The data come from the RNA Mapping Database (RMDB), library OK2TRN.
Structure probing data (2A3 and DMS) for a 177-nucleotide construct.
Reactivities are given for positions 27 through 126.
The RNA was probed in 150 mM KOAc, 10 mM MgCl2 and 150 mM bicine (pH 8.5) at 24 C.
For 2A3, 8,345 sequencing reads were counted.

[RMDB]
RNA sequence: GGGAACGACUCGAGUAGAGUCGAAAAAACACUGAAGAAAAUCUUACCUAUCUGCAACUAAAAGAAAGAUGCAUUAAGGAUGAGGAAACAGGGCUCUGUCUUCUGCCUCUGAAAGAAAAGAAGAAACAUACGUAAUAUGUUUCGACAUAUUACGUAUAAAAGAAACAACAACAACAAC
Reactivity to 2A3 in 0.01 (KOAc 150mM, MgCl2 10mM, bicine 150mM(pH8.5), 24C), signal-to-noise 6, nucleotides 027 to 126: a000a010c110a030c060u140g030a110a030g090a080a230a060a070u040c010u040u020a050c000c000u030a060u050c020u040g020c010a010a040c050u120a130a080a050a100g200a040a160a010g040a060u030g000c020a020u050u070a080a030g040g030a080u080g050a020g000g060a060a100a010c040a090g010g020g010c020u050c050u170g110u030c010u050u000c000u020g020c010c000u050c080u090g170a160a070a090g050a000a020a010a000g030a010a000g000a010a030a010c050
Reactivity to DMS in 0.01 (KOAc 150mM, MgCl2 10mM, bicine 150mM(pH8.5), 24C), signal-to-noise 6, nucleotides 027 to 126: a090a050c090a060c070u010g010a110a080g010a100a080a130a070u010c010u000u000a080c010c010u000a160u000c160u000g010c040a020a080c070u000a060a060a080a080g010a090a060a040g020a100u000g020c020a030u000u000a110a050g000g010a100u000g010a030g010g000a080a080a080c140a100g000g010g010c020u010c150u010g010u000c030u000u000c010u000g010c040c010u000c070u000g010a060a070a080g010a020a030a040a040g020a020a020g000a050a070a100c250